[RMDB]
RNA sequence: GGGAACGACUCGAGUAGAGUCGAAAACCUGCUUGCUUGUUCUGUGACUUUCAGAAUAAGAUCCUUUGUGCAGUGCCCAGUUCAUUAAAUAGAAAAUUGCCUUCAUCUUGGAUGCUGUUGUUCUGGAGGUACUGUUCAUUUUCGAAUGAACAGUACCAAAAGAAACAACAACAACAAC
Reactivity to 2A3 in 0.01 (KOAc 150mM, MgCl2 10mM, bicine 150mM(pH8.5), 24C), signal-to-noise 1, nucleotides 027 to 126: c000c000u030g010c080u000u030g000c080u000u000g000u000u000c000u000g000u000g240a300c300u150u190u000c000a000g000a000a000u000a010a010g000a000u050c150c030u170u060u200g140u100g030c000a000g000u030g000c040c040c010a000g030u250u130c000a000u000u150a270a000a000u150a000g110a290a100a000a000u080u150g000c010c010u080u300c080a050u040c150u050u000g020g020a000u160g080c010u010g060u000u000g000u000u010c000u000g000g000a000